Structure probing data (2A3 and DMS) for a 207-nucleotide construct. The DMS profile rests on 1,546 reads. The 2A3 profile rests on 528 reads. DMS adducts were read by reverse transcription with MarathonRT.
RNA sequence: GGGAACGACUCGAGUAGAGUCGAAAAUUGGGAUAUUGUUAGAAAUGUUCCACUGACCAAAUCACAAUUCUGGAGAGGGGCAGGGGCCAAGUCUAUAUUUUAAAACACCCUCUAGACAGUUCUGAUGCAUGUUAAAGUGUGUGAACCUCUGUGCUAGCUGCAUAGAAAGGUUCGCCUUUCUAUGCAGAAAAGAAACAACAACAACAAC
Reactivity to 2A3 in 0.01 (KOAc 150mM, MgCl2 10mM, bicine 150mM(pH8.5), 24C), signal-to-noise 1, nucleotides 027 to 156: u030u010g050g000g000a020u070a020u100u100g060u090u200a190g060a140a090a050u000g000u010u000c000c020a030c010u050g110a120c000c000a080a040a040u180c090a010c060a130a200u260u080c090u110g020g000a020g000a020g040g010g070g000c000a010g000g030g000g000c040c080a030a010g000u000c000u050a090u060a080u200u160u150u250a020a120a000a020c030a040c050c020c000u020c010u000a050g030a100c000a040g000u100u040c040u070g020a050u070g010c050a030u060g000u080u170a120a090a040g020u030g000u040g020u000g010a000a080c010c000u000c050u070g000u030g000c000u030a050g030
Reactivity to DMS in 0.01 (KOAc 150mM, MgCl2 10mM, bicine 150mM(pH8.5), 24C), signal-to-noise 1, nucleotides 027 to 156: u040u010g010g040g020a050u010a020u010u000g040u020u010a250g000a020a080a110u000g020u000u000c030c010a170c130u000g000a190c070c070a060a190a220u000c100a100c040a060a130u000u000c110u000g010g010a050g000a070g000g020g030g040c050a070g010g020g040g020c040c040a020a060g000u000c080u000a050u010a050u000u010u010u020a020a130a060a190c040a040c060c010c000u030c010u010a100g010a030c040a070g000u010u000c000u000g020a090u000g010c040a050u000g030u000u000a030a050a130g030u000g000u000g050u000g020a050a080c000c010u000c000u000g030u010g010c020u010a100g020
Background: 2A3 adducts were read by reverse transcription with SuperScript II with manganese. It was measured as part of the RMDB library OK3TST.